[RMDB]
RNA sequence: GGGAACGACUCGAGUAGAGUCGAAAAAUCUUUAAGCAGAUGGCAGGUUCACCCCGUACGGUGCGGAAGUUCGCGCUUCCGUGAAACGCGAAAAUCGGACGGUGGCUGCAAGUCGCAUCGAAAAACCUAUAGCUUGUUAGGUUCGCCUAACAAGCAAGCUCUAGUCUUCGUUCGCGAAGACUAGAGCAAAAGAAACAACAACAACAAC
Reactivity to 2A3 in 0.01 (KOAc 150mM, MgCl2 10mM, bicine 150mM(pH8.5), 24C), signal-to-noise 1, nucleotides 027 to 156: a000u010c020u010u140u080a050a020g010c010a000g040a100u090g020g040c040a020g040g070u220u110c070a070c020c000c000c000g000u010a020c010g030g000u110g050c010g030g020a000a000g000u120u300c120g000c060g010c110u000u000c020c000g010u060g030a130a100a000c180g020c020g100a050a010a030a100u100c010g000g010a020c040g020g040u090g010g000c020u000g000c020a010a030g020u000c000g000c040a010u040c050g040a290a000a000a000a000c020c000u110a050u140a070g000c000u000u000g010u000u000a000g000g000u000u040c150g080c060c000u000a000a000c000a000a000g020c000a000a000